Conditions: 150 mM KOAc, 10 mM MgCl2 and 150 mM bicine (pH 8.5), 24 C. An RNA of 207 nucleotides, treated with 2A3 and DMS and read out base by base. For 2A3, 5,125 sequencing reads were counted. Values cover nucleotides 27 to 156. It was measured as part of the RMDB library OK3TST. For 2A3 the reverse transcriptase was SuperScript II with manganese. For DMS, 3,539 sequencing reads were counted.
RNA sequence: GGGAACGACUCGAGUAGAGUCGAAAAAGGCGGUCCAUUGCUGCCCUCUUGUGAUCGAGGUCGGUCGAUGGCAGCACGGCCGGAAUGUCAUCUAUGCGCUGGCAGAUGAGCGGCUGGCGGUUGAUACAUUCUGUGAGAUAUUGGUAGCCUGCCAAAAGACGACCAUAGUAUUCGUACUAUGGUCGUCAAAAGAAACAACAACAACAAC
Reactivity to 2A3 in 0.01 (KOAc 150mM, MgCl2 10mM, bicine 150mM(pH8.5), 24C), signal-to-noise 6, nucleotides 027 to 156: a000g010g010c010g010g050u050c010c000a050u040u090g010c000u000g010c000c040c000u030c010u050u290g130u130g030a020u030c020g030a090g130g300u230c040g000g010u010c030g010a020u080g000g000c010a000g010c010a010c030g040g010c010c000g000g010a010a000u010g010u040c070a000u000c020u040a020u090g300c000g000c000u010g020g000c010a020g060a300u170g060a160g130c140g050g000c010u010g010g000c000g020g000u010u030g010a000u000a000c000a000u000u010c010u020g070u080g080a120g020a090u160a100u140u070g010g000u010a030g010c000c040u060g020c030c010a010a090a010a060
Reactivity to DMS in 0.01 (KOAc 150mM, MgCl2 10mM, bicine 150mM(pH8.5), 24C), signal-to-noise 1, nucleotides 027 to 156: a060g010g000c010g000g000u000c010c040a050u000u000g040c010u000g000c010c020c000u000c060u000u030g030u030g030a040u010c000g010a240g020g040u000c060g020g000u010c010g010a070u000g020g000c010a040g020c010a110c030g000g010c020c000g010g010a030a010u000g020u020c140a000u000c010u000a070u030g000c000g000c010u010g010g000c020a110g030a260u010g020a230g000c110g010g060c010u000g030g070c040g010g000u000u000g000a060u010a040c030a060u000u010c020u010g000u010g010a140g010a110u000a160u030u000g010g030u010a040g000c040c010u000g000c000c040a050a080a110a240